[RMDB]
RNA sequence: GGGAACGACUCGAGUAGAGUCGAAAAACUUAUAACAAUAAUAGCUAUCAUUUAUUGAGUGUUUACCGUAUGUCAGGAACUAUGCUAACCACUUUACAUGCGUUAUCUCAUUUAAUCCUAGGAGGUGAGCACUGUUAUCGUCAUCAUCGUCAUCAUACGUAUAAAUACGUUUCGACGUAUUUAUACGAAAAGAAACAACAACAACAAC
Reactivity to DMS in 0.01 (KOAc 150mM, MgCl2 10mM, bicine 150mM(pH8.5), 24C), signal-to-noise 4, nucleotides 027 to 156: a090c040u010u010a110u010a100a230c010a050a070u000a060a100u020a130g010c040u010a160u020c040a120u000u000u000a100u030u000g000a060g030u000g020u010u000u000a030c080c010g020u000a050u020g020u000c090a090g010g010a090a110c060u010a050u010g000c060u010a060a100c050c010a110c030u000u010u010a070c070a030u000g010c050g020u000u000a040u000c030u010c050a120u000u010u000a070a120u010c050c040u000a080g020g000a190g030g040u010g000a050g000c050a040c070u000g010u000u000a030u000c020g000u000c030a070u010c060a110u000c080g000u010c050a120u000c060a120u000a170
Reactivity to 2A3 in 0.01 (KOAc 150mM, MgCl2 10mM, bicine 150mM(pH8.5), 24C), signal-to-noise 9, nucleotides 027 to 156: a000c140u240u170a130u150a200a070c040a040a060u180a130a060u060a110g060c040u090a060u240c040a110u090u090u220a120u080u100g030a030g020u050g050u040u070u060a040c030c020g020u060a040u080g030u050c050a010g000g050a050a090c070u070a090u260g060c030u050a040a070c040c020a050c030u060u070u060a030c020a050u030g010c010g020u020u050a050u030c030u010c030a050u040u060u170a120a090u030c040c040u040a060g040g080a040g000g060u020g010a000g010c010a010c030u000g050u080u080a100u100c080g050u010c030a050u020c010a020u040c050g110u040c030a060u050c030a050u140a180
Source information:
Structure probing data (DMS and 2A3) for a 207-nucleotide construct. The RNA was probed in 150 mM KOAc, 10 mM MgCl2 and 150 mM bicine (pH 8.5) at 24 C. For 2A3 the reverse transcriptase was SuperScript II with manganese. For DMS the reverse transcriptase was MarathonRT.